Record summary
Structure probing data (2A3 and DMS) for a 177-nucleotide construct. Reactivities are given for positions 27 through 126. In probing experiments dimethyl sulfate is read out at A N1 and C N3, which are open when not base-paired. For 2A3, 16,922 sequencing reads were counted.

RNA sequence: GGGAACGACUCGAGUAGAGUCGAAAAGAUAUGGAAUGAUCUGAAUUGCAAUGACGUAAAGUCGGAAACGACUUUAUAAGACAGCAGAUCAGAGUCAUUCCUAAGUCAAACAUGGCUUCGGCCAUGAUCGUUUUAUAAGGUUCGCCUUAUAAAACGAAAAAGAAACAACAACAACAAC
Reactivity to 2A3 in 0.01 (KOAc 150mM, MgCl2 10mM, bicine 150mM(pH8.5), 24C), signal-to-noise 6, nucleotides 027 to 126: g020a030u060a040u110g000g010a000a010u010g000a010u030c000u000g030a080a080u050u030g000c100a120a300u240g050a050c050g000u010a010a010a000g000u010c010g000g020a080a080a020c010g010a000c000u010u000u000a030u010a040a080g150a080c060a040g070c010a010g040a120u020c010a000g020a010g140u070c000a010u010u020c000c000u020a130a010g050u030c030a070a070a120c010a020u000g000g000c000u100u080c300g200g000c000c000a010u000g000a100
Reactivity to DMS in 0.01 (KOAc 150mM, MgCl2 10mM, bicine 150mM(pH8.5), 24C), signal-to-noise 7, nucleotides 027 to 126: g000a050u010a300u020g000g010a030a010u010g010a090u000c000u000g010a010a130u010u000g020c010a170a150u000g010a160c300g000u000a000a000a010g000u000c000g000g000a100a090a240c010g010a000c000u000u000u000a000u000a120a140g010a170c240a120g010c010a030g010a070u000c010a020g010a060g000u000c000a010u000u000c000c000u010a030a090g010u000c040a110a110a300c020a000u000g000g010c000u000u010c190g020g020c000c010a000u000g010a080